[RMDB]
RNA sequence: GGGAACGACUCGAGUAGAGUCGAAAAGAUCUGCGCCGAUCCGAAAGGCUAGCAAACAGCCCGCAUCAUGUCGUCUCCUAACUUCGACGUGGUGAAAUACUGAGCUUAUGCGAGUAAGCCUGUUAGCAAUAGAUCAGAACGUUCGCGUUCUGAUCAACGACUUACUAGCCUUCGGGCUAGUAAGUCGAAAAGAAACAACAACAACAAC
Reactivity to 2A3 in 0.01 (KOAc 150mM, MgCl2 10mM, bicine 150mM(pH8.5), 24C), signal-to-noise 1, nucleotides 027 to 156: g050a030u010c040u040g010c040g030c060c000g020a000u090c000c000g130a110a000a100g010g000c000u130a000g000c020a010a010a240c050a060g050c000c000c000g010c000a020u020c000a000u040g000u000c000g040u000c010u070c080c080u190a160a190c050u120u090c020g070a070c010g010u000g020g090u010g010a030a030a030u200a020c010u010g000a000g040c000u010u070a000u090g070c100g020a030g030u050a010a010g000c070c000u110g000u120u100a040g050c090a100a110u030a160g000a000u000c000a000g000a000a000c000g040u110u100c250g000c000g120u000u000c000u000g000a000u000c000a000a000